[RMDB]
RNA sequence: GGGAACGACUCGAGUAGAGUCGAAAAAAAUUAUGACACCUACUAAAAUUUUGAUUCGCCUAUAAAUGCCAAGGAGCAAAGCAUUUGUCACCCUUGUGUUCUUUGUGUUUUUUGCUGCUGAAGGCUCAACUAUCAAACGUUUCGACGUUUGAUAGUUAAAAGAAACAACAACAACAAC
Reactivity to 2A3 in 0.01 (KOAc 150mM, MgCl2 10mM, bicine 150mM(pH8.5), 24C), signal-to-noise 1, nucleotides 027 to 126: a000a000a000u250u090a110u120g000a000c050a010c090c100u160a040c080u120a220a280a170a270u050u200u140u060g030a130u100u080c030g120c070c010u200a130u070a290a160a070u230g000c000c000a080a020g060g020a030g000c000a000a000a000g000c000a030u030u060u110g010u000c010a010c070c230c030u020u210g010u000g150u110u000c000u000u090u090g030u000g000u000u050u030u100u210u100g040c040u050g050c000u010g000a150a050g000g090c030u040c050
Reactivity to DMS in 0.01 (KOAc 150mM, MgCl2 10mM, bicine 150mM(pH8.5), 24C), signal-to-noise 3, nucleotides 027 to 126: a020a030a080u010u000a060u000g000a110c060a070c090c040u000a080c050u010a050a080a080a090u000u010u000u010g020a160u000u010c090g000c010c010u000a080u010a060a040a070u010g000c020c020a040a150g010g000a030g010c010a020a030a030g010c050a040u010u010u010g010u000c070a060c040c190c130u000u010g010u010g010u000u010c030u000u010u010g000u000g000u010u010u010u020u010u010g020c030u000g020c020u000g010a130a140g000g000c020u000c120